[RMDB]
RNA sequence: GGGAACGACUCGAGUAGAGUCGAAAAACUACAUCGCGCAGCAGCUCCCGUUCGUAGACACGCAUGUUGCCCAGAGCCGUUUCUGCAGCCGUUAAUAUCCGGCGCACGUCGGCGAUGAUUGCCGGGAACUCAUAUAGUGCUUCGGCACUAUAUGAGUAAAAGAAACAACAACAACAAC
Reactivity to DMS in 0.01 (KOAc 150mM, MgCl2 10mM, bicine 150mM(pH8.5), 24C), signal-to-noise 6, nucleotides 027 to 126: a150c060u010a060c070a090u010c070g020c070g020c060a080g020c060a090g010c050u000c020c030c030g000u000u000c090g010u000a050g000a080c070a060c080g010c070a070u000g000u000u000g010c020c010c020a160g000a110g020c010c020g000u000u000u000c030u010g020c060a110g020c020c010g010u000u000a080a080u000a150u010c190c000g010g010c010g010c030a060c130g010u000c030g000g010c010g000a070u010g000a100u010u010g010c020c010g000g010g000a100
Reactivity to 2A3 in 0.01 (KOAc 150mM, MgCl2 10mM, bicine 150mM(pH8.5), 24C), signal-to-noise 4, nucleotides 027 to 126: a010c040u110a030c020a080u070c050g000c010g000c050a090g000c010a010g010c030u020c000c020c000g030u060u080c050g010u030a040g020a090c030a010c120g030c040a070u090g020u020u050g070c020c020c000a030g010a010g040c020c010g030u030u040u060c010u030g020c010a070g020c000c010g040u010u030a080a020u040a050u130c030c010g000g000c000g000c010a020c060g130u090c010g020g040c070g020a050u100g020a040u050u210g030c010c010g000g030g050a030